The data come from the RNA Mapping Database (RMDB), library OK2TST.
Chemical mapping of a 177-nucleotide RNA with 2A3 and DMS.
For 2A3 the reverse transcriptase was SuperScript II with manganese.
The RNA was probed in 150 mM KOAc, 10 mM MgCl2 and 150 mM bicine (pH 8.5) at 24 C.

[RMDB]
RNA sequence: GGGAACGACUCGAGUAGAGUCGAAAACGUUGACCAUCAGCCUGGCUACGUGGGCGGCUGGUGCGGCUAUCGCCACGGCCUGCUGCUGCGCCACCAUUUUGUGGGCGGCUGGCACUGCUACCACGCCGUGACAAUGUCACUUCGGUGACAUUGUCACAAAAGAAACAACAACAACAAC
Reactivity to 2A3 in 0.01 (KOAc 150mM, MgCl2 10mM, bicine 150mM(pH8.5), 24C), signal-to-noise 2, nucleotides 027 to 126: c020g020u040u140g060a110c020c050a060u060c030a020g000c010c000u080g080g050c020u060a020c120g030u060g020g040g050c000g000g020c000u030g000g020u040g030c050g050g020c040u130a060u290c090g000c100c010a060c050g010g010c000c000u010g030c050u040g000c010u000g030c080g230c010c000a020c000c010a160u180u210u100u200g010u000g010g060g050c000g020g040c030u010g040g010c020a050c090u050g000c010u100a080c010c000a020c050g050c030c010
Reactivity to DMS in 0.01 (KOAc 150mM, MgCl2 10mM, bicine 150mM(pH8.5), 24C), signal-to-noise 1, nucleotides 027 to 126: c100g000u000u020g000a140c110c010a050u010c040a080g000c040c060u020g040g010c050u010a060c080g040u000g000g020g010c060g000g030c010u000g000g020u000g000c030g020g030c060u000a080u000c150g000c050c040a070c080g000g000c010c090u000g000c060u000g020c010u000g000c060g020c000c030a030c000c270a140u000u000u000u000g020u000g000g010g000c010g010g030c040u010g000g010c050a060c140u000g000c080u000a060c060c020a030c070g040c090c070